[RMDB]
Chemical mapping of a 207-nucleotide RNA with DMS and 2A3.

RNA sequence: GGGAACGACUCGAGUAGAGUCGAAAAGUUUAUUUGAUGGUACCUACUACUCGGAUAACCGUAAACGAGAGUUAUUGCGGUAGGGAGACGAGAGUCGUCCCUAGUAGCUCGUCAGAGCUGCGACACUGUCAAAUUGCCUGGACAUCCCGCUACGCUGCUAUUAGUUAGUCUUCGGACUAACUAAUAGAAAAGAAACAACAACAACAAC
Reactivity to DMS in 0.01 (KOAc 150mM, MgCl2 10mM, bicine 150mM(pH8.5), 24C), signal-to-noise 3, nucleotides 027 to 156: g010u000u000u000a040u010u010u000g020a080u010g000g030u000a080c040c020u000a040c010u000a000c010u000c050g030g010a070u000a040a080c020c060g010u000a070a060a140c090g010a200g000a170g020u010u000a060u000u000g020c030g020g010u010a040g000g000g010a240g010a040c010g000a240g000a110g000u000c010g000u000c010c010c000u000a080g020u000a030g010c020u000c010g010u000c300a130g000a040g000c010u000g000c010g000a130c110a050c050u000g000u000c030a030a030a080u000u000g020c010c010u000g010g000a080c070a130u000c010c000c010g010c060u010a070c060g020c060u010g000
Reactivity to 2A3 in 0.01 (KOAc 150mM, MgCl2 10mM, bicine 150mM(pH8.5), 24C), signal-to-noise 9, nucleotides 027 to 156: g030u090u130u080a090u040u060u040g050a030u030g020g050u040a040c040c000u010a040c010u040a080c010u040c040g070g030a080u080a170a120c070c060g110u120a100a090a100c090g030a060g010a010g110u060u050a100u090u120g140c060g020g000u030a030g050g040g010a030g020a000c040g010a010g000a010g120u010c040g060u010c000c000c000u000a010g010u000a000g000c000u010c030g130u110c170a060g000a000g000c010u010g000c000g010a010c020a000c090u040g000u030c000a030a050a090u060u050g010c010c010u040g020g030a030c010a070u030c010c000c010g000c060u070a050c100g040c080u120g000
For 2A3 the reverse transcriptase was SuperScript II with manganese. The 2A3 profile rests on 8,503 reads. For DMS the reverse transcriptase was MarathonRT. Source: RMDB library RSTRND, as collected in RNAgym.